Record summary
Chemical mapping of a 177-nucleotide RNA with 2A3 and DMS. The reactions ran in a buffer of 150 mM KOAc, 10 mM MgCl2 and 150 mM bicine (pH 8.5), at 24 C. For 2A3 the reverse transcriptase was SuperScript II with manganese.
[RMDB]
RNA sequence: GGGAACGACUCGAGUAGAGUCGAAAAGCGGUUAUUAUCGGCAAAACCCACAUGACCGAGUUUGCCUUCACGCCGGUCGGCCUCAAUCCGCAUUACGGUGAGCCGGGCAAUGCGAUUGACCCGGCGAGAGGCUAUACGUGUUCGCACGUAUAGCCUCAAAAGAAACAACAACAACAAC
Reactivity to 2A3 in 0.01 (KOAc 150mM, MgCl2 10mM, bicine 150mM(pH8.5), 24C), signal-to-noise 2, nucleotides 027 to 126: g090c030g000g100u030u080a130u110u080a090u160c030g000g040c000a000a010a080a190c000c020c010a010c040a080u100g060a030c060c020g010a030g060u000u070u140g030c000c000u020u100c070a040c070g010c010c000g010g020u060c040g030g020c020c000u050c030a030a030u040c040c000g040c040a040u070u150a060c040g050g080u040g020a010g080c000c000g000g000g000c010a010a010u120g140c100g200a080u040u020g060a160c010c000c010g000g000c010g000a000
Reactivity to DMS in 0.01 (KOAc 150mM, MgCl2 10mM, bicine 150mM(pH8.5), 24C), signal-to-noise 3, nucleotides 027 to 126: g020c020g020g010u000u010a060u010u000a070u020c140g010g030c060a030a040a040a170c040c010c020a150c170a160u000g000a070c040c010g000a080g020u000u010u010g000c040c020u000u010c130a080c070g010c020c030g000g020u010c070g000g010c090c060u000c080a060a090u000c030c030g010c070a070u010u010a070c040g000g000u000g000a150g030c010c000g010g010g010c050a000a020u010g040c180g020a130u000u000g000a100c030c000c000g000g000c010g010a020